[RMDB]
Record summary
Source: RMDB library M2PK90, as collected in RNAgym. Chemical mapping of a 177-nucleotide RNA with DMS. For DMS, 914 sequencing reads were counted. The RNA was probed in 150 mM KOAc, 10 mM MgCl2 and 150 mM bicine (pH 8.5) at 24 C. DMS adducts were read by reverse transcription with MarathonRT.
RNA sequence: GGGAACGACUCGAGUAGAGUCGAAAAAUUUACGACUCUCAAGCGAAGCGAGUGCUAGCAUGCUCGAUAGCACUAAACAAAACAGGAAACUGAAAAUCGAGCAAUCGCUAGAGUCGAUCCCAUACAACAGGGCUAUUAAUUUCGAUUAAUAGCCCUGAAAAGAAACAACAACAACAAC
Reactivity to DMS in 0.01 (KOAc 150mM, MgCl2 10mM, bicine 150mM(pH8.5), 24C), signal-to-noise 2, nucleotides 027 to 126: a140u000u000u000a160c000g000a000c000u000c010u000c040a300a060g020c000g000a050a190g000c070g000a030g040u000g000c020u010a090g030c080a300u000g020c020u000c010g020a050u000a070g040c000a050c030u030a110a090a120c130a090a060a090a120c000a040g000g000a140a080a180c030u000g000a060a060a050a100u000c010g020a050g000c000a060a110u000c090g000c000u000a060g000a000g020u010c000g010a030u000c010c000c010a070u020a090c090a140a130